[RMDB]
RNA sequence: GGGAACGACUCGAGUAGAGUCGAAAAGUCUAUGGUUGCAGCUUUUAGGAGGCCACGGCUUUUACUCCCAACAGGCCCACUGAGACUAAUGGGGCCACACUACUGGGAGGGGGCAGUGUUUCUCAAAGCAUGGUCUUUAGACCGUCUGAGUGAGAAACAGCUAAUUAAUAUUCGUAUUAAUUAGCUGAAAAGAAACAACAACAACAAC
Reactivity to DMS in 0.01 (KOAc 150mM, MgCl2 10mM, bicine 150mM(pH8.5), 24C), signal-to-noise 2, nucleotides 027 to 156: g010u000c010u000a020u010g030g020u000u010g020c050a090g010c080u000u010u000u000a050g030g000a240g030g020c070c020a040c080g010g040c020u000u000u010u000a270c030u010c000c010c000a040a040c060a080g000g050c010c010c000a110c090u010g000a200g020a270c110u010a080a100u000g020g000g030g040c000c030a030c050a070c060u010a030c030u030g010g030g010a060g010g000g000g020g010c030a040g010u000g010u010u000u000c010u020c020a040a080a120g010c080a020u000g010g000u010c000u000u000u000a090g000a040c010c000g010u010c010u000g000a150g020u000g000a030g000a090a070a200
Reactivity to 2A3 in 0.01 (KOAc 150mM, MgCl2 10mM, bicine 150mM(pH8.5), 24C), signal-to-noise 3, nucleotides 027 to 156: g010u010c000u020a060u100g030g050u070u120g160c030a040g030c020u030u060u050u170a050g020g030a010g010g030c090c000a010c010g010g000c010u000u020u030u190a160c010u000c000c000c010a010a030c100a060g010g030c030c060c010a110c110u140g060a080g100a210c110u250a220a080u220g020g010g000g000c030c000a000c000a000c000u190a020c070u030g010g000g010a010g000g020g000g010g000c000a020g000u010g000u050u040u000c010u000c000a000a020a000g030c070a060u050g030g000u000c000u030u110u060a040g000a010c010c020g040u020c050u050g080a110g100u090g010a050g110a120a050a020

Structure probing data (DMS and 2A3) for a 207-nucleotide construct. The RNA was probed in 150 mM KOAc, 10 mM MgCl2 and 150 mM bicine (pH 8.5) at 24 C. 2A3 adducts were read by reverse transcription with SuperScript II with manganese. For 2A3, 1,494 sequencing reads were counted. For DMS the reverse transcriptase was MarathonRT. For DMS, 4,725 sequencing reads were counted.